[RMDB]
RNA sequence: GGGAACGACUCGAGUAGAGUCGAAAACAGCUGGUGAAUAGUCAUAGUUUGCUAGCUGUCAUAGUUUAUGACUCGAGGUUAAAUCGUUCAAUUUAACCUUUAAAAAUAGAACUUGUUGUUUCCAUGAUUGUUUUGUGAUCAAUUGGAAACAAGACAACAUGACUUCCUUGUUCGCAAGGAAGUCAUGAAAAGAAACAACAACAACAAC
Reactivity to 2A3 in 0.01 (KOAc 150mM, MgCl2 10mM, bicine 150mM(pH8.5), 24C), signal-to-noise 2, nucleotides 027 to 156: c020a020g020c000u000g030g010u030g020a000a000u010a060g010u030c000a000u000a020g000u010u020u010g010c000u010a000g000c030u000g010u000c000a020u090a060g100u120u230u030a000u030g000a000c000u000c000g000a000g000g010u000u000a000a010a020u060c070g000u000u030c010a000a000u010u000u000a000a000c000c000u030u000u020a080a050a030a060a070u200a120g020a040a010c010u000u070g000u030u000g000u000u010u000c020c030a050u100g030a070u070u000g020u080u050u040u130g060u060g070a140u110c120a210a230u290u140g050g040a040a060a010c000a000a000g020a020c010a020a000